[RMDB]
RNA sequence: GGGAACGACUCGAGUAGAGUCGAAAAUCUUCUGUGGGAUUACCGCUACUGGAAUAGCGCUAAAGAGAAGGAGCAGUUCAAGAAGGAGCAAGCACCGUGGCUGUAGGAUACGCAAUCAAGUUCGCUCAUUUGCCGUCUGAGACCCCAUAUAAGGCAGUAUACCAACGGAUUUCGAUCCGUUGGUAUAAAAAGAAACAACAACAACAAC
Reactivity to DMS in 0.01 (KOAc 150mM, MgCl2 10mM, bicine 150mM(pH8.5), 24C), signal-to-noise 1, nucleotides 027 to 156: u000c050u010u020c050u010g000u020g010g010g000a240u000u000a090c140c030g010c010u000a030c020u000g010g020a170a200u000a060g010c000g000c060u000a090a090a050g000a150g020a150a110g000g000a110g010c040a100g040u000u000c090a000a130g050a110a070g000g020a150g060c070a060a110g020c040a040c100c050g020u010g010g000c020u010g060u000a030g050g040a150u000a080c040g000c050a020a100u030c060a060a090g010u000u020c040g000c010u000c050a170u000u000u000g000c080c100g030u000c000u010g030a160g010a110c040c040c010c070a060u000a120u000a070a070g010g040c040a060g000
Reactivity to 2A3 in 0.01 (KOAc 150mM, MgCl2 10mM, bicine 150mM(pH8.5), 24C), signal-to-noise 2, nucleotides 027 to 156: u030c030u120u050c050u070g020u060g030g030g070a050u120u030a050c050c040g030c030u040a020c060u140g040g060a150a020u070a100g000c040g010c040u050a050a070a030g030a010g030a030a070g000g000a020g020c050a080g020u000u100c080a100a070g040a060a050g100g040a030g020c040a060a010g020c050a050c040c000g060u050g030g000c010u080g030u080a030g050g030a020u020a160c050g000c120a030a060u080c030a090a040g020u070u040c030g000c030u060c020a050u010u040u110g050c020c030g090u020c020u000g000a030g000a110c000c030c000c000a000u050a030u010a090a010g060g010c000a000g010